The record gives the reactivity of an RNA of 207 nucleotides to 2A3 and DMS. The reactions ran in a buffer of 150 mM KOAc, 10 mM MgCl2 and 150 mM bicine (pH 8.5), at 24 C. The DMS profile rests on 2,985 reads. Source: RMDB library M2RFPK, as collected in RNAgym. For DMS the reverse transcriptase was MarathonRT.
RNA sequence: GGGAACGACUCGAGUAGAGUCGAAAACAGGAAACUGGUUAAUCGUUUUCCUUGGUAGUAUAGCGGAAACCAUAAAUAAGAAGAACUCUAAGUGCUUGAGUAGAGUUAAAAUAGUUAGACAGGCAAUUAAGGUACUCCACGUUCGCGUGGAGUACAAGACUGUUUGAUAGUUCGCUAUCAAACAGUCAAAAGAAACAACAACAACAAC
Reactivity to 2A3 in 0.01 (KOAc 150mM, MgCl2 10mM, bicine 150mM(pH8.5), 24C), signal-to-noise 5, nucleotides 027 to 156: c040a020g030g040a030a050a050c060u120g040g060u150u160a170a080u130c030g000u020u040u060u080c000c000u020u060g050g000u010a050g020u030a060u110a120g030c040g020g040a050a040a040c030c010a020u080a120a070a020u130a100a040g090a050a010g030a050a020c000u000c000u010a020a030g020u040g210c030u030u030g010a010g010u020a010g010a010g010u060u120a010a060a010a040u090a020g060u070u010a010g000a010c010a010g000g010c000a010a040u110u100a160a020g090g000u000a000c000u000c000c000a000c000g020u040u030c130g010c010g090u010g000g010a000g000u000a000c000a000a000
Reactivity to DMS in 0.01 (KOAc 150mM, MgCl2 10mM, bicine 150mM(pH8.5), 24C), signal-to-noise 2, nucleotides 027 to 156: c080a160g030g010a070a060a070c060u020g020g030u010u020a080a100u000c070g000u010u000u000u010c000c020u000u010g040g030u000a060g010u000a130u010a050g020c050g040g000a100a060a060c040c010a130u000a060a090a090u000a060a120g020a120a110g030a070a030c020u000c000u000a050a150g010u000g010c070u000u000g000a120g040u000a050g010a030g020u000u000a010a090a080a110u010a080g000u000u000a050g010a140c060a060g000g010c030a050a090u010u000a060a120g010g030u000a010c000u000c000c000a020c000g030u000u000c250g070c040g050u000g000g000a000g030u000a000c000a020a110